[RMDB]
RNA sequence: GGGAACGACUCGAGUAGAGUCGAAAACAGCGUUAAUUGUUGCUGGUAAUAUUACAGCAUUAACUGAUAUUGAAAUCCAUCCACUUGCACGAAAACGAGCUGGGGUGGCCAAUAGAGCAACGAUUCUUCUUCCAAGGGCGGAUGAGCUAACUGGUGAACGGCUUUAUCUAUUCGUAGAUAAAGCCGUAAAAGAAACAACAACAACAAC
Reactivity to DMS in 0.01 (KOAc 150mM, MgCl2 10mM, bicine 150mM(pH8.5), 24C), signal-to-noise 2, nucleotides 027 to 156: c030a130g020c090g030u010u010a080a090u000u000g010u000u000g020c000u010g010g000u030a060a050u000a110u000u000a140c060a050g000c040a110u000u000a040a050c050u000g000a110u000a050u000u000g020a060a050a160u000c020c020a050u000c010c020a050c030u010u000g000c030a080c040g000a140a140a160a060c000g010a030g020c130u020g000g010g000g030u000g000g100c100c010a040a080u000a070g000a100g010c040a090a080c040g010a100u000u000c020u000u000c070u010u000c070c060a090a140g010g000g000c060g040g000a120u010g000a000g040c050u000a070a070c030u000g000g010u010g010a100
Reactivity to 2A3 in 0.01 (KOAc 150mM, MgCl2 10mM, bicine 150mM(pH8.5), 24C), signal-to-noise 3, nucleotides 027 to 156: c040a020g100c050g060u100u120a080a040u140u120g020u060u060g000c010u030g060g040u040a090a070u090a090u200u170a050c030a040g030c050a030u070u090a060a060c010u030g050a030u020a050u100u060g050a070a080a040u050c000c000a000u030c010c000a080c060u060u070g020c040a020c150g190a070a070a090a050c040g000a030g030c060u100g020g000g000g040u010g010g000c020c000a040a100u060a050g060a000g040c020a010a010c030g010a000u060u000c030u100u000c000u070u030c070c020a030a020g060g000g000c040g000g100a130u080g000a060g000c020u020a000a070c020u010g000g030u030g040a080

The data come from the RNA Mapping Database (RMDB), library OK3TST. Chemical mapping of a 207-nucleotide RNA with DMS and 2A3. For DMS the reverse transcriptase was MarathonRT. The reactions ran in a buffer of 150 mM KOAc, 10 mM MgCl2 and 150 mM bicine (pH 8.5), at 24 C.